[RMDB]
RNA sequence: GGGAACGACUCGAGUAGAGUCGAAAAGAUAUGGAUGCCAUUAGCUUUUGACGAAGUGUGUAUCGGAAACGAUACACCUUCGAUAAGCUGGGUGGCAUCCUAAGUCAAACUGGAGUUCGCUCCAGAACUCCAGCUUCUCCUUCGGGAGAAGCUGGAGAAAAGAAACAACAACAACAAC
Reactivity to 2A3 in 0.01 (KOAc 150mM, MgCl2 10mM, bicine 150mM(pH8.5), 24C), signal-to-noise 1, nucleotides 027 to 126: g070a060u160a080u160g010g010a000u010g000c000c020a040u080u030a010g000c000u000u050u140u300g270a200c050g010a000a010g070u110g000u000g000u300a000u020c020g040g020a070a070a080c000g030a000u010a010c010a010c020c000u000u000c010g000a010u000a000a000g030c030u080g150g000g030u000g000g050c010a020u000c000c000u010a020a010g020u010c050a060a130a180c010u010g020g000a010g000u110u150c200g050c070u000c030c000a000g010a080a050
Reactivity to DMS in 0.01 (KOAc 150mM, MgCl2 10mM, bicine 150mM(pH8.5), 24C), signal-to-noise 1, nucleotides 027 to 126: g000a020u000a300u010g010g010a020u000g040c000c010a030u000u000a040g030c000u000u010u030u010g000a300c200g000a000a000g010u010g040u000g030u000a020u000c010g000g000a120a080a080c010g000a040u000a000c020a000c010c000u000u000c000g000a140u000a010a000g000c010u000g020g040g000u000g010g000c000a000u000c000c000u000a000a140g010u000c030a070a200a190c030u000g000g000a040g010u000u030c190g050c050u050c100c010a010g000a050a090